The record gives the reactivity of an RNA of 177 nucleotides to 2A3 and DMS.
The 2A3 profile rests on 1,494 reads.
The reactions ran in a buffer of 150 mM KOAc, 10 mM MgCl2 and 150 mM bicine (pH 8.5), at 24 C.
RNA sequence: GGGAACGACUCGAGUAGAGUCGAAAAUCCUUCAGGGAUCCCCGGGGAAACCUGGAGGAAGUCCGACGAGAUCGCGGCUGGGGCUUAGGACCCCACUCCUGCGAGACAGGAGUAAUCCUAAACAGGGCCAAUAAAAAUAGUUCGCUAUUUUUAUUGGAAAAGAAACAACAACAACAAC
Reactivity to 2A3 in 0.01 (KOAc 150mM, MgCl2 10mM, bicine 150mM(pH8.5), 24C), signal-to-noise 1, nucleotides 027 to 126: u000c010c000u000u010c000a010g000g040g000a020u060c010c010c030c070g300g080g000g000a020a010a000c010c000u000g010g020a000g000g000a000a010g020u000c020c010g010a110c000g050a060g060a130u120c040g000c050g070g050c060u020g020g010g000g000c000u020u000a020g030g050a070c010c010c000c000a000c000u010c010c000u000g010c060g250a190g020a070c000a010g000g010a010g010u000a020a040u030c000c010u030a020a000a000c040a050g010g050g070
Reactivity to DMS in 0.01 (KOAc 150mM, MgCl2 10mM, bicine 150mM(pH8.5), 24C), signal-to-noise 1, nucleotides 027 to 126: u010c010c010u000u000c000a010g000g010g000a300u000c000c020c090c300g010g000g030g000a030a050a220c010c000u010g000g000a010g000g000a020a070g000u000c010c020g010a230c050g000a080g000a080u010c020g000c100g010g020c090u010g040g000g010g000c040u000u000a020g010g010a050c020c010c020c030a010c000u000c020c000u000g020c010g000a150g000a220c000a030g000g010a040g010u000a080a020u000c000c000u000a010a030a150c130a020g010g000g000
For 2A3 the reverse transcriptase was SuperScript II with manganese.